[RMDB]
RNA sequence: GGGAACGACUCGAGUAGAGUCGAAAACGAGUUCGGUGCCGUCGAAGACCACCAGGUUGGUCCGUAGCUCGCCCCGCUCGACGCGCCGCAGCGCCGCACGCACCACCCGCACCGGGGUCGCCGUCAGUCGGUAAGACCUUUUCGAAGGUCUUACCGAAAAAGAAACAACAACAACAAC
Reactivity to DMS in 0.01 (KOAc 150mM, MgCl2 10mM, bicine 150mM(pH8.5), 24C), signal-to-noise 3, nucleotides 027 to 126: c050g020a070g000u000u000c030g000g010u000g020c070c040g000u000c070g000a090a130g010a030c030c010a070c120c200a130g000g000u000u000g020g010u000c000c100g000u010a100g000c030u010c020g010c050c020c010c090g000c050u000c030g020a070c040g000c070g020c030c030g030c070a110g000c040g020c030c020g010c070a060c060g010c040a070c050c050a100c030c040c030g020c050a080c070c010g000g000g020g010u000c040g010c020c030g010u000c060a070g000
Reactivity to 2A3 in 0.01 (KOAc 150mM, MgCl2 10mM, bicine 150mM(pH8.5), 24C), signal-to-noise 1, nucleotides 027 to 126: c020g040a000g060u090u070c010g030g030u040g080c040c020g020u080c030g030a100a030g030a060c000c020a030c100c040a080g070g150u060u080g010g020u030c000c040g080u090a020g010c030u060c020g000c040c000c000c020g050c020u040c000g010a050c010g000c000g050c040c010g010c010a030g070c000g000c010c010g000c000a040c080g000c000a020c010c000a040c000c030c010g000c030a040c010c040g000g060g000g000u030c050g030c050c000g060u030c000a020g110